[RMDB]
RNA sequence: GGGAACGACUCGAGUAGAGUCGAAAACAGACGAACCCCUGGCCCACAUGAUGGACACAUUUCCACGUUUCCUGGGAAAGACUAGAUGAUGACAGAGUUGGACAGGGAUAUAUCAGUCCCUUAUCAGUGAGCUGAAAUCAUUCGUGAUUUCAGCUCAAAAAGAAACAACAACAACAAC
Reactivity to DMS in 0.01 (KOAc 150mM, MgCl2 10mM, bicine 150mM(pH8.5), 24C), signal-to-noise 2, nucleotides 027 to 126: c130a090g020a090c060g000a110a150c140c030c000c030u000g000g000c040c000c050a010c120a070u020g010a130u000g010g030a130c060a060c080a130u000u000u000c030c030a040c160g000u000u000u000c040c020u000g010g050g010a030a060a050g000a130c080u000a080g010a100u000g000a080u020g000a150c060a040g050a120g000u000u000g000g000a100c050a020g020g000g020a040u000a040u000a100u020c080a080g000u000c000c000c000u000u000a070u000c130a060g010
This 177-nucleotide RNA was probed chemically with DMS. The reactions ran in a buffer of 150 mM KOAc, 10 mM MgCl2 and 150 mM bicine (pH 8.5), at 24 C. Source: RMDB library OK2TST, as collected in RNAgym. For DMS, 1,192 sequencing reads were counted.